RNA sequence: GGGAACGACUCGAGUAGAGUCGAAAACAGAGUCUCAAGGAGCCUCCAAUGGGCCUCACGUAUUCAUCUAGAUGGCGCUUCGGACAACGGCAUCACAUAAGAGAUGCAGCUCCUGACUUCUCCUCUGCCUGUGUUUAACCUUCGGGUUAAACACAGGAAAAGAAACAACAACAACAAC
Reactivity to DMS in 0.01 (KOAc 150mM, MgCl2 10mM, bicine 150mM(pH8.5), 24C), signal-to-noise 3, nucleotides 027 to 126: c230a100g000a000g000u020c070u030c140a170a030g000g000a000g050c010c070u030c000c000a040a110u010g000g000g040c000c010u020c060a060c210g020u030a100u100u050c180a100u020c110u050a100g000a100u050g000g020c010g020c000u020u020c130g000g000a030c100a090a040c240g000g000c000a000u010c010a120c070a110u030a090a050g000a100g000a020u000g000c000a270g040c040u000c000c000u000g000a080c010u000u000c010u000c060c040u000c150u010g000
Reactivity to 2A3 in 0.01 (KOAc 150mM, MgCl2 10mM, bicine 150mM(pH8.5), 24C), signal-to-noise 7, nucleotides 027 to 126: c050a010g020a000g030u010c010u030c080a040a070g010g000a000g000c000c010u000c010c010a030a100u110g030g050g020c000c020u010c010a080c060g090u100a230u210u230c090a140u060c080u120a070g010a130u200g050g010c120g010c110u040u050c090g020g020a010c030a090a040c110g020g000c000a010u010c010a020c040a130u290a090a050g030a000g000a030u010g000c000a000g000c010u000c000c000u000g000a010c000u060u040c010u030c000c010u030c020u030g050